Chemical mapping of a 207-nucleotide RNA with DMS and 2A3. DMS adducts were read by reverse transcription with MarathonRT. For 2A3 the reverse transcriptase was SuperScript II with manganese. The reactions ran in a buffer of 150 mM KOAc, 10 mM MgCl2 and 150 mM bicine (pH 8.5), at 24 C. Source: RMDB library OK3TST, as collected in RNAgym.
RNA sequence: GGGAACGACUCGAGUAGAGUCGAAAAUACUGUGAGUUAUGGCCAUGGCAAGCAAAUAAUUGCGAAAUUACAUUUCCCUCGCCUUCUUCCGACGGCCAUUUGUGACUUGCAUUGAAGCUUACACUGAGCAACAAGCAAUAGUUAAAUAUAGUGUAAAACCGCACUAAUGAUUCGUCAUUAGUGCGGUAAAAGAAACAACAACAACAAC
Reactivity to DMS in 0.01 (KOAc 150mM, MgCl2 10mM, bicine 150mM(pH8.5), 24C), signal-to-noise 2, nucleotides 027 to 156: u000a070c090u000g030u000g010a100g020u010u000a050u000g020g020c050c080a080u010g010g040c040a020a020g000c050a060a080a180u000a050a050u000u010g040c050g040a060a030a040u000u000a110c150a230u000u000u030c010c010c020u020c020g010c020c020u000u020c090u010u000c070c040g010a080c020g020g030c030c010a080u010u000u010g040u000g000a020c060u010u010g040c000a100u000u010g000a070a150g030c050u000u000a060c000a030c060u010g030a100g000c020a080a240c030a020a080g040c030a100a140u010a080g040u000u000a080a120a070u000a090u010a020g030u020g030u000a050a030a080
Reactivity to 2A3 in 0.01 (KOAc 150mM, MgCl2 10mM, bicine 150mM(pH8.5), 24C), signal-to-noise 2, nucleotides 027 to 156: u150a010c080u100g020u030g080a060g030u130u060a010u040g000g010c000c060a060u030g000g050c030a060a000g000c070a080a030a090u150a080a080u210u140g050c010g120a010a090a170u100u040a070c070a140u030u070u090c020c010c020u030c010g010c020c000u020u050c050u070u090c110c070g060a110c060g020g000c000c020a010u080u060u180g060u040g030a020c000u010u010g000c000a130u030u120g090a080a020g000c000u000u000a020c050a010c060u020g010a000g030c060a030a060c010a060a000g050c010a060a130u010a110g040u020u090a050a100a000u200a020u080a110g060u080g000u050a060a140a030